[RMDB]
RNA sequence: GGGAACGACUCGAGUAGAGUCGAAAAUCAGACAUCAUCGGUGGUCUGCUCUGGGUUGUGGGCUUUACUCUAGAGACAACGGCAGACUUUCAGAAGUAUGCCUUCAAACAGAACCCGGCCAACAAGGACCAUAUGAUGAGUUCGCUCAUCAUAUGGUAAAAGAAACAACAACAACAAC
Reactivity to DMS in 0.01 (KOAc 150mM, MgCl2 10mM, bicine 150mM(pH8.5), 24C), signal-to-noise 7, nucleotides 027 to 126: u010c040a080g010a080c040a050u010c060a110u010c140g020g030u000g010g010u000c020u000g010c160u010c020u010g010g010g020u000u000g000u000g010g000g010c020u000u000u010a050c020u000c030u000a080g000a110g010a110c150a080a100c180g010g010c070a070g010a070c020u000u000u010c180a090g010a060a040g010u000a040u000g000c000c000u000u000c070a040a050a090c100a060g000a030a100c040c030c030g000g020c050c060a060a060c140a070a110g000g010

An RNA of 177 nucleotides, treated with DMS and read out base by base.
Source: RMDB library OK2TST, as collected in RNAgym.
For DMS, 7,943 sequencing reads were counted.
Reactivities are given for positions 27 through 126.